RNA sequence: GGGAACGACUCGAGUAGAGUCGAAAACGAUAAUCUUUAUUGGAAUUACCGUGGCUGCAAUCUACCAUCAGAGACGGGCGCAGUCCCGCCUGUUCCAUCUCUUUUUCACAUUGCGCAACAUCCGCAGGAUGGAUUAUCACUUCGGUGAUAAUCCAUCAAAAGAAACAACAACAACAAC
Reactivity to DMS in 0.01 (KOAc 150mM, MgCl2 10mM, bicine 150mM(pH8.5), 24C), signal-to-noise 6, nucleotides 027 to 126: c050g000a070u010a040a050u010c050u010u020u040a130u060u020g010g000a070a060u010u010a040c070c010g020u010g000g010c020u010g010c050a070a060u010c060u030a130c140c050a030u020c090a040g010a060g010a070c080g000g010g000c080g030c100a070g010u000c030c060c020g000c190c010u010g000u000u020c030c030a070u000c020u000c000u000u010u000u000u010c050a060c180a050u010u010g010c010g020c070a070a070c170a080u010c060c010g000c070a070g010
Reactivity to 2A3 in 0.01 (KOAc 150mM, MgCl2 10mM, bicine 150mM(pH8.5), 24C), signal-to-noise 9, nucleotides 027 to 126: c030g030a060u100a100a080u120c090u100u270u170a190u130u180g080g040a100a050u080u030a070c020c020g010u020g030g000c020u030g000c050a030a070u030c020u090a090c030c030a060u110c050a030g040a010g040a130c070g030g010g000c060g000c040a020g050u090c000c020c010g030c010c010u040g010u050u010c020c020a080u010c020u000c000u040u080u010u060u060c060a080c030a120u040u130g000c030g000c020a040a150c020a180u070c030c000g020c040a010g090
This 177-nucleotide RNA was probed chemically with DMS and 2A3. For 2A3 the reverse transcriptase was SuperScript II with manganese. It was measured as part of the RMDB library OK1LIB. The DMS profile rests on 14,361 reads.